Chemical mapping of a 177-nucleotide RNA with 2A3 and DMS. 2A3 adducts were read by reverse transcription with SuperScript II with manganese.
RNA sequence: GGGAACGACUCGAGUAGAGUCGAAAAUGGGCCGCUUCCGGCAAGAGGGGCCGAAAGUGUGAAGGGAGAGACCGCUCCGAGAGUUGGGAGAAGAAAGAGAGCGAAUGUGUCCGGAGGGAACCCCCAACAUGUACAGAUUGUUCGCAAUCUGUACAUGAAAAGAAACAACAACAACAAC
Reactivity to 2A3 in 0.01 (KOAc 150mM, MgCl2 10mM, bicine 150mM(pH8.5), 24C), signal-to-noise 2, nucleotides 027 to 126: u020g010g010g020c020c000g020c030u020u020c010c010g000g000c000a030a010g140a030g080g060g040g000c020c010g020a050a050a020g060u060g030u060g100a060a030g000g000g010a100g000a000g010a080c050c050g000c030u000c010c040g040a080g010a010g110u130u160g050g010g010a100g030a110a050g070a020a070a010g090a010g000a000g010c020g000a110a090u090g030u040g030u070c020c000g020g010a020g010g020g000a030a020c000c000c000c020c000a010a020
Reactivity to DMS in 0.01 (KOAc 150mM, MgCl2 10mM, bicine 150mM(pH8.5), 24C), signal-to-noise 3, nucleotides 027 to 126: u010g000g000g010c050c050g020c010u000u000c000c020g000g010c030a080a080g010a070g010g020g010g050c010c010g000a030a030a030g040u000g000u030g020a080a080g000g000g000a080g000a110g010a090c100c080g020c040u000c010c040g020a110g010a080g010u000u000g010g000g000a110g000a060a080g000a070a080a120g010a070g000a060g000c030g000a060a030u010g000u010g010u010c030c020g020g010a160g000g000g000a080a130c040c020c000c010c000a110a190
It was measured as part of the RMDB library 15KREP.